[RMDB]
RNA sequence: GGGAACGACUCGAGUAGAGUCGAAAACAUGGUCCCAGCCUCCUCGCUGGCGCCGGCUGGGCAACAUUCCGAGGGGACCGUCCCUCGGUAAUGGCGAAUGGGACCCAGAACUCUCUCUAGAUUCCCACAAUGCAACAACGUUCGCGUUGUUGCAUUGAAAAGAAACAACAACAACAAC
Reactivity to 2A3 in 0.01 (KOAc 150mM, MgCl2 10mM, bicine 150mM(pH8.5), 24C), signal-to-noise 1, nucleotides 027 to 126: c020a080u150g000g000u040c000c000c000a010g020c010c040u060c020c000u070c060g010c010u020g160g040c090g030c080c030g100g010c060u070g010g030g000c050a020a030c010a010u030u010c000c000g010a010g010g030g000g060a130c040c050g280u210c000c000c000u000c000g000g000u000a010a000u010g030g020c030g060a070a050u050g000g000g000a000c010c010c010a010g050a110a010c010u000c000u000c000u010c010u030a000g010a120u010u000c010c020c010a000
Reactivity to DMS in 0.01 (KOAc 150mM, MgCl2 10mM, bicine 150mM(pH8.5), 24C), signal-to-noise 1, nucleotides 027 to 126: c060a100u020g000g010u010c140c000c010a030g010c020c050u000c080c060u000c270g040c160u000g010g000c090g000c000c080g000g020c050u020g030g000g000c150a080a100c120a020u000u000c010c000g020a020g000g070g010g000a080c150c300g000u010c000c000c000u000c000g000g000u000a000a000u000g010g000c190g020a040a160u010g000g000g000a130c000c010c140a070g000a180a020c090u000c060u000c010u000c000u000a010g000a290u000u000c010c000c000a170